[RMDB]
RNA sequence: GGGAACGACUCGAGUAGAGUCGAAAAGUAUUCAUUCUCCUUUCUCGAUAGAGUUUGGAGUCAUACAACCCCAGAAACCAUUCCUUAUACCUUGAGUAUUGCUGAAUUCAGUUUAGCGUGCAUGCUCUUAAUGGGUGCACCUUCGGGUGCACCCAAAUCAACAUCGUGUGUUCGCACACGAUGUUGAAAAAGAAACAACAACAACAAC
Reactivity to 2A3 in 0.01 (KOAc 150mM, MgCl2 10mM, bicine 150mM(pH8.5), 24C), signal-to-noise 2, nucleotides 027 to 156: g010u020a050u060u110c100a100u130u010c030u010c000c020u000u000u000c040u050c010g270a300u240a300g010a010g000u000u010u000g000g000a030g020u000c010a010u010a040c020a020a050c010c000c000c000a010g070a140a080a040c060c030a090u120u170c040c050u130u060a080u090a300c020c020u070u110g010a010g000u030a020u110u250g000c000u000g020a050a090u150u090c000a120g080u000u050u100a040g000c040g040u080g050c020a020u030g000c000u000c000u050u110a130a080u060g000g010g010u010g000c010a000c000c000u010u110c240g080g000g000u000g000c000a000c000c000c000a000a000a000